[RMDB]
Conditions: 150 mM KOAc, 10 mM MgCl2 and 150 mM bicine (pH 8.5), 24 C. An RNA of 207 nucleotides, treated with 2A3 and DMS and read out base by base. 2A3 adducts were read by reverse transcription with SuperScript II with manganese. Reactivities are rounded to 0.1 and cut off at 0 and 3. The 2A3 profile rests on 2,055 reads. Reactivities are given for positions 27 through 156. High 2A3 reactivity points to a flexible backbone, as in loops and unpaired stretches.

RNA sequence: GGGAACGACUCGAGUAGAGUCGAAAAGACGUCUGGUCGAUCGACUUCAUGUUUGCUUGAAUGUGUGGUAGUGAAUUCGGAGUGAUCCUGGUCGCGCUUCGGAAAUCACGAAAGGUCGGAUAUGUGAAAAAGUAAACUUUUCGGUUGUCGUGACCGGCAGUGGGUUACAGUUCGCUGUAACCCACUGAAAAGAAACAACAACAACAAC
Reactivity to 2A3 in 0.01 (KOAc 150mM, MgCl2 10mM, bicine 150mM(pH8.5), 24C), signal-to-noise 4, nucleotides 027 to 156: g020a000c050g050u130c220u260g070g000u000c040g000a020u020c020g020a030c020u030u030c090a090u130g040u060u040u030g110c070u090u110g070a140a070u110g070u030g020u090g090g000u060a040g000u020g010a060a070u050u020c000g030g000a010g010u010g010a070u080c040c050u040g040g020u070c070g000c000g000c020u000u010c000g000g040a070a170a190u050c010a030c040g000a060a030a020g050g020u110c040g010g030a060u040a110u190g120u080g050a210a050a030a000a000g060u110a020a040a030c000u020u050u080u090c040g050g000u060u090g000u030c030g010u020g020a010c020c000g010g010
Reactivity to DMS in 0.01 (KOAc 150mM, MgCl2 10mM, bicine 150mM(pH8.5), 24C), signal-to-noise 1, nucleotides 027 to 156: g030a100c010g000u000c080u010g030g000u000c010g020a210u000c030g050a070c010u000u030c070a080u020g010u000u010u000g010c030u000u000g020a070a060u000g020u000g040u000g030g000u000a160g010u010g010a090a300u010u000c030g040g010a020g010u000g010a060u010c090c040u010g030g010u000c010g000c020g000c030u020u020c000g010g020a010a060a200u010c030a080c000g030a020a100a140g020g020u000c040g020g000a100u000a050u000g020u000g020a080a050a020a100a110g050u000a070a040a070c020u000u010u000u000c050g010g000u000u000g000u000c010g010u010g010a120c010c000g010g030